Chemical mapping of a 207-nucleotide RNA with 2A3. Conditions: 150 mM KOAc, 10 mM MgCl2 and 150 mM bicine (pH 8.5), 24 C. Values cover nucleotides 27 to 156. 2A3 adducts were read by reverse transcription with SuperScript II with manganese. It was measured as part of the RMDB library RNAMAK.

[RMDB]
RNA sequence: GGGAACGACUCGAGUAGAGUCGAAAACGCUGGGUCAUCAAGGUCAAAAUGGAGGGAGCUGAAGCGCGCACGGCAUCGAUCUCCAUUUAGACCGAUGACCUGUGCUGAAGCGCGCACGGCAACCGAAAGGUGCGAUGGCCUGUCUUCGGACAGGCAACUACUUCUGCCAGUUCGCUGGCAGAAGUAGAAAAGAAACAACAACAACAAC
Reactivity to 2A3 in 0.01 (KOAc 150mM, MgCl2 10mM, bicine 150mM(pH8.5), 24C), signal-to-noise 2, nucleotides 027 to 156: c040g000c020u070g040g000g060u000c010a010u010c060a260a270g030g000u020c020a110a020a000a010u000g000g000a000g010g020g020a030g000c010u050g030a160a010g020c020g010c000g000c010a000c020g000g010c020a020u300c130g010a010u030c010u040c000c000a000u000u000u030a040g000a000c010c000g010a000u010g010a000c000c000u000g000u000g020c030u130g070a120a060g050c020g010c000g000c000a010c040g040g010c070a110a000c000c000g020a070a040a050g000g010u030g010c010g160a250u170g130g000c000c020u010g000u030c020u020u070c160g030g000a000c020a000g020g000c010a010a000